About this RNA: Conditions: 150 mM KOAc, 10 mM MgCl2 and 150 mM bicine (pH 8.5), 24 C. This 170-nucleotide RNA was probed chemically with 2A3 and DMS. The DMS profile rests on 37,557 reads. For 2A3 the reverse transcriptase was SuperScript II with manganese. The data come from the RNA Mapping Database (RMDB), library 15KLIB. The 2A3 profile rests on 34,291 reads.

RNA sequence: GGGAACGACUCGAGUAGAGUCGAAAAGGGCCUUCCUUCUUCGGUGAUCCUUCCUCUCCCUGUCGGUGAAGUCUCCCGCACGGGUCCUCUUCCUAGGUCCGGAGUCGAUCUCCAUCUGAUCCGUCCGUAAGCUAUGCGUUCGCGCAUAGCAAAAGAAACAACAACAACAAC
Reactivity to 2A3 in 0.01 (KOAc 150mM, MgCl2 10mM, bicine 150mM(pH8.5), 24C), signal-to-noise 9, nucleotides 027 to 129: g030g000g020c020c000u060u060c040c000u050u100c010u060u060c060g040g030u110g050a100u040c000c000u030u030c000c000u040c000u030c000c010c010u060g100u060c050g010g030u050g030a080a020g050u000c020u010c030c010c000g010c020a040c010g020g010g010u030c000c000u010c000u040u010c000c010u020a030g000g050u000c030c020g010g000a000g020u010c010g010a030u000c010u000c010c010a090u040c060u070g040a060u020c020c050g070u050c010c010g080u060a080a010
Reactivity to DMS in 0.01 (KOAc 150mM, MgCl2 10mM, bicine 150mM(pH8.5), 24C), signal-to-noise 5, nucleotides 027 to 129: g000g000g000c040c030u000u000c060c020u000u040c040u000u000c020g010g010u000g050a120u020c040c040u030u000c040c020u030c030u010c000c040c000u040g030u040c050g040g030u040g000a100a090g020u030c070u020c010c000c020g020c120a050c090g030g060g000u000c030c040u030c060u030u020c020c040u020a120g000g000u000c050c000g040g000a060g040u010c000g050a080u010c010u020c000c050a000u040c060u000g000a080u020c030c000g000u000c040c040g060u000a070a140